RNA sequence: GGGAACGACUCGAGUAGAGUCGAAAAGGGGCAACUCUUCUCAGAAUCCAGCGAGAGGCGUAGGAGAGAGGGCCGCGGUGCUCUGGAGUAGAGGCUUCUUGCUUCGAAACACCAUCGAUCGUCCCUUCUUCUUUUACCUUCUCCUGGCUCUUCGAGUACUAUAUGGCCAGUUCGCUGGCCAUAUAGUAAAAGAAACAACAACAACAAC
Reactivity to 2A3 in 0.01 (KOAc 150mM, MgCl2 10mM, bicine 150mM(pH8.5), 24C), signal-to-noise 1, nucleotides 027 to 156: g030g070g030g010c050a100a100c010u030c000u100u120c020u030c020a030g070a150a180u300c020c000a160g010c240g070a000g010a010g000g000c170g030u010a000g010g000a000g000a000g000a000g000g000g000c020c000g000c010g000g020u000g000c000u020c000u000g000g010a000g000u000a000g000a000g000g010c010u220u080c100u300u300g000c000u010u040c010g010a000a010a010c020a030c110c000a000u000c000g020a300u020c020g000u000c000c000c000u020u110c010u080u040c010u000u020u020u010a000c000c000u000u000c000u020c000c000u000g000g020c000u020c010u020u000c080g000a000g000u030